This 177-nucleotide RNA was probed chemically with 2A3 and DMS. Values are in units of 0.01, from 0 to 300, in steps of 10.
RNA sequence: GGGAACGACUCGAGUAGAGUCGAAAAGCCAUCGCUUUCGAGCGAUGGCAUUGCCCAAAGAGGACCUGGGGGUGUCUGGGCUCCUAAACUCAUCAGCCGUUCUACCGCUAAAUUUCGAUUUAGCGAACGUUGAUAUGGAGUUCGCUCCAUAUCAACGAAAAGAAACAACAACAACAAC
Reactivity to 2A3 in 0.01 (KOAc 150mM, MgCl2 10mM, bicine 150mM(pH8.5), 24C), signal-to-noise 3, nucleotides 027 to 126: g010c000c000a000u000c000g010c020u090u060u130c270g150a010g010c000g000a010u000g000g020c000a000u000u120g030c010c010c000a050a100a010g110a030g040g020a050c030c040u060g020g000g030g000g030u040g020u000c040u020g030g100g030c020u040c010c000u040a120a090a030c030u030c020a090u010c020a030g030c030c020g020u040u010c050u100a220c030c010g010c000u000a000a020a020u100u090u100c170g050a020u000u020u020a000g000c020g010a070a030
Reactivity to DMS in 0.01 (KOAc 150mM, MgCl2 10mM, bicine 150mM(pH8.5), 24C), signal-to-noise 3, nucleotides 027 to 126: g010c010c010a010u010c010g010c000u000u000u010c170g000a030g020c010g020a020u000g000g000c000a010u000u000g010c000c010c000a050a120a100g010a100g000g000a090c070c080u000g020g000g000g000g020u000g020u010c060u000g030g000g000c060u010c020c020u010a060a070a060c060u000c020a080u010c100a000g010c030c030g010u000u010c020u000a140c120c030g010c010u010a000a000a000u000u000u020c170g010a050u000u000u000a010g000c000g010a060a100
About this RNA:
The RNA was probed in 150 mM KOAc, 10 mM MgCl2 and 150 mM bicine (pH 8.5) at 24 C. DMS adducts were read by reverse transcription with MarathonRT. It was measured as part of the RMDB library M2PK50.